An RNA of 177 nucleotides, treated with DMS and read out base by base. Conditions: 150 mM KOAc, 10 mM MgCl2 and 150 mM bicine (pH 8.5), 24 C.
RNA sequence: GGGAACGACUCGAGUAGAGUCGAAAAGAUAUGGAUUAGUGGAGAGGGGGUGAAGUGGGAACUAUAGGCUCGGAAACGAGCCUACGAAUUCCCACUUCACCUCCCUCGUUGAAACUAAUCCUAAGUCCUCUACCUUAUACUUCGGUAUAAGGUAGAGAAAAGAAACAACAACAACAAC
Reactivity to DMS in 0.01 (KOAc 150mM, MgCl2 10mM, bicine 150mM(pH8.5), 24C), signal-to-noise 2, nucleotides 027 to 126: g000a050u000a300u010g000g010a010u000u000a010g010u000g000g010a070g010a020g010g010g000g020g020u010g000a020a010g050u000g010g010g000a020a030c070u000a140u000a010g010g020c000u000c030g000g000a100a050a280c010g020a010g000c000c000u000a000c070g000a060a250u000u010c000c000c000a000c010u010u000c000a010c000c000u000c000c000c000u000c000g010u000u020g010a230a150a030c000u000a000a010u020c000c000u000a030a140g010u000c040